[RMDB]
RNA sequence: GGGAACGACUCGAGUAGAGUCGAAAACUUUGGUGAGCCCCUAUCUAGUAUAGCAAUCCACCAAGCAGGUGAAUUCACACAAUUCAGGUUCUCAAAGAAAAUGCGCCCUGACUUGACAGGUAUGGUCGAUCAUAUUACCAUUCGUGGUAAUAUGAUCAAAAGAAACAACAACAACAAC
Reactivity to 2A3 in 0.01 (KOAc 150mM, MgCl2 10mM, bicine 150mM(pH8.5), 24C), signal-to-noise 9, nucleotides 027 to 126: c010u040u030u070g060g010u120g030a020g020c000c000c010c010u010a050u040c030u030a050g100u110a070u040a070g030c050a020a050u010c010c010a010c000c010a070a030g110c080a050g030g070u030g030a050a050u090u090c030a030c000a010c020a110a070u090u070c030a040g040g000u030u010c020u010c000a060a070a020g100a030a130a020a020u110g040c020g030c030c000c000u030g030a070c020u050u070g040a030c010a040g030g090u140a080u150g070g020u060c060
Reactivity to DMS in 0.01 (KOAc 150mM, MgCl2 10mM, bicine 150mM(pH8.5), 24C), signal-to-noise 6, nucleotides 027 to 126: c060u000u010u010g020g020u000g000a050g010c070c280c260c080u010a030u010c030u030a110g020u030a040u000a030g010c180a080a090u020c060c020a010c030c010a080a050g010c150a100g020g020u000g000a040a040u010u000c080a100c140a070c100a050a050u010u010c070a060g000g000u000u000c020u000c010a070a080a090g000a070a040a070a040u010g010c130g000c180c010c010u020g000a060c080u010u010g010a080c050a030g000g000u010a040u010g000g000u010c120